The data come from the RNA Mapping Database (RMDB), library TTRDES. Structure probing data (2A3 and DMS) for a 177-nucleotide construct. 2A3 adducts were read by reverse transcription with SuperScript II with manganese.
RNA sequence: GGGAACGACUCGAGUAGAGUCGAAAAGAUAUGGACCGAUAACUUCGAUAAGCUUUGUGUCGGAAACGACAUGAGCUUUUGACGAAGGAAGCGGUCCUAAGUCAAAAGUAGAUCUUCGGAUCUACAAGCUUACUUGUGAGUUCGCUCACAAGUAAGCAAAAGAAACAACAACAACAAC
Reactivity to 2A3 in 0.01 (KOAc 150mM, MgCl2 10mM, bicine 150mM(pH8.5), 24C), signal-to-noise 2, nucleotides 027 to 126: g050a020u100a040u240g000g000a010c010c010g010a030u080a180a050c040u010u010c020g070a090u030a110a000g000c010u180u300u300g040u010g010u030c000g010g090a070a070a060c030g000a000c000a010u030g010a000g000c030u060u020u040u110g160a090c040g010a000a030g030g020a050a130g000c000g000g000u010c010c000u000a000a000g040u030c020a120a000a040a040g000u010a010g000a030u010c010u000u090c300g100g000a000u000c010u000a010c000a000a010
Reactivity to DMS in 0.01 (KOAc 150mM, MgCl2 10mM, bicine 150mM(pH8.5), 24C), signal-to-noise 2, nucleotides 027 to 126: g000a020u000a300u010g000g010a010c000c000g000a010u000a210a300c000u010u000c000g020a210u000a010a000g020c010u000u000u020g060u000g000u000c000g060g000a070a050a180c020g000a040c000a020u010g000a000g000c020u000u040u000u010g000a120c120g010a010a000g010g000a060a120g000c000g000g000u000c000c020u020a020a110g000u000c030a080a050a080a220g000u000a010g000a020u010c000u000u010c270g020g010a020u010c000u000a000c000a070a140